An RNA of 177 nucleotides, treated with 2A3 and DMS and read out base by base. Conditions: 150 mM KOAc, 10 mM MgCl2 and 150 mM bicine (pH 8.5), 24 C.
[RMDB]
RNA sequence: GGGAACGACUCGAGUAGAGUCGAAAAGAUAUGGAGCUUGCAACAGCUACGGUUCGGAAACGAACCCGUAGACAUGCAAGCCUCCUAAGUCAAAACCACUGAUAAGCCUUCGGGCUUAUCAGUGGAAGAUAAGAAAGACCUUCGGGUCUUUCUUAUCAAAAGAAACAACAACAACAAC
Reactivity to 2A3 in 0.01 (KOAc 150mM, MgCl2 10mM, bicine 150mM(pH8.5), 24C), signal-to-noise 1, nucleotides 027 to 126: g020a010u040a020u110g000g000a000g010c010u000u020g000c010a090a060c060a300g020c010u000a000c010g000g000u020u000c000g020g010a020a020a050c000g010a000a000c030c000c000g000u000a000g060a160c030a040u060g020c000a010a010g000c000c000u000c000c010u020a060a030g030u020c010a020a030a050a250c010c000a000c000u030g010a000u000a020a000g000c040c010u070u140c300g090g050g000c000u010u010a000u000c010a000g010u020g000g000a000a010
Reactivity to DMS in 0.01 (KOAc 150mM, MgCl2 10mM, bicine 150mM(pH8.5), 24C), signal-to-noise 2, nucleotides 027 to 126: g000a020u000a200u020g000g000a040g000c000u000u000g000c000a030a090c260a170g020c010u000a010c000g000g000u000u010c000g020g000a070a060a130c010g000a000a000c160c070c110g000u000a000g000a170c080a140u000g000c000a010a000g000c160c020u000c000c010u000a030a090g010u010c030a070a070a200a180c000c000a000c000u000g000a010u010a000a010g000c000c000u000u000c230g010g010g000c000u000u000a000u000c000a000g010u000g000g000a020a040
For 2A3, 2,233 sequencing reads were counted.